This 207-nucleotide RNA was probed chemically with 2A3. It was measured as part of the RMDB library OK3TST. Values cover nucleotides 27 to 156. For 2A3 the reverse transcriptase was SuperScript II with manganese.
RNA sequence: GGGAACGACUCGAGUAGAGUCGAAAAGUAUCACGCCUCUGUUAGUGCAACAUGAAAUUGAAUGUAGAGCUAAGAUGCAAGAGAGAAUCCAGAAAGUUAUACUUCAUGGAAGCUCCCACUCAGGUGGGCUUGGAAUAUGUACCUUUCAAACAGACACGAAUACGUCCAACUUCGGUUGGACGUAUUCAAAAGAAACAACAACAACAAC
Reactivity to 2A3 in 0.01 (KOAc 150mM, MgCl2 10mM, bicine 150mM(pH8.5), 24C), signal-to-noise 1, nucleotides 027 to 156: g030u000a000u130c040a010c070g000c000c000u020c110u070g040u080u040a060g000u050g140c030a060a000c110a130u180g140a000a160a100u190u250g010a060a010u030g030u070a040g000a000g220c040u060a040a000g020a050u140g000c040a130a000g010a000g030a000g040a120a040u000c000c000a050g090a000a070a000g000u000u010a060u020a040c000u040u030c010a090u070g010g030a020a010g000c030u030c000c020c010a020c000u150c020a010g080g230u120g000g010g030c020u010u000g040g030a160a000u040a010u090g020u030a020c030c000u020u050u050c110a070a060a060c000a050g150a020c070a000c240